[RMDB]
RNA sequence: GGGAACGACUCGAGUAGAGUCGAAAAUCGCGGUGGAGAGUUUUUAUAAUUUUGGGGUGAUGUGUUAAAGGGUCAUUCGGGUGUAGUUUAUCUCGAACAUUUCGGCAAAGUUUAUUUAUUUGCCGCGCAGUUAUUAUAAGUUCGCUUAUAAUAACUGAAAAGAAACAACAACAACAAC
Reactivity to 2A3 in 0.01 (KOAc 150mM, MgCl2 10mM, bicine 150mM(pH8.5), 24C), signal-to-noise 3, nucleotides 027 to 126: u100c020g010c030g020g030u060g030g010a050g000a020g000u010u020u020u080u220a110u030a100a060u020u070u060u120g030g000g020g020u030g020a060u030g030u000g010u040u030a060a060a020g030g010g010u040c020a020u050u040c020g000g010g030u030g010u030a000g000u010u050u080a070u020c040u010c010g000a050a010c020a050u070u200u110c000g000g010c000a010a010a000g000u060u120u090a130u090u200u020a040u010u030u010g000c000c000g010c020g000
Reactivity to DMS in 0.01 (KOAc 150mM, MgCl2 10mM, bicine 150mM(pH8.5), 24C), signal-to-noise 6, nucleotides 027 to 126: u030c040g010c090g000g030u010g000g000a080g010a090g010u010u010u040u030u040a050u030a080a090u020u000u020u020g020g010g000g010u010g010a050u010g010u020g010u010u010a060a080a110g000g000g010u000c050a150u000u010c060g000g000g010u010g010u000a070g010u010u020u010a070u010c020u000c040g000a040a090c140a090u010u020u030c010g010g010c010a000a010a020g020u020u030u040a050u040u020u020a060u010u000u000g000c000c000g020c300g000

Chemical mapping of a 177-nucleotide RNA with 2A3 and DMS. Source: RMDB library OK1LIB, as collected in RNAgym. The 2A3 profile rests on 2,195 reads.